[RMDB]
RNA sequence: GGGAACGACUCGAGUAGAGUCGAAAAGAUAUGGACACUGAGGACAUGAACUCUCGGAAACGAGGUUCAACAGCCUCAGUGUCCUAAGUCAAACGGAAGUUAUGCCCUUCGGGGCAUAACUUCCGAAUCAUGAAGGGGAGUUCGCUCCCCUUCAUGAAAAAGAAACAACAACAACAAC
Reactivity to DMS in 0.01 (KOAc 150mM, MgCl2 10mM, bicine 150mM(pH8.5), 24C), signal-to-noise 2, nucleotides 027 to 126: g000a020u000a250u010g000g000a020c000a010c010u000g000a010g020g000a060c080a240u000g000a010a010c010u020c000u000c000g000g010a060a060a130c000g020a000g000g000u000u000c000a000a070c250a130g000c020c000u010c000a010g020u000g000u010c000c000u000a000a070g000u000c020a110a130a270c020g010g010a030a010g000u000u000a000u000g000c000c000c000u000u010c190g040g030g000g000c000a000u000a000a000c010u010u010c000c000g000a000a000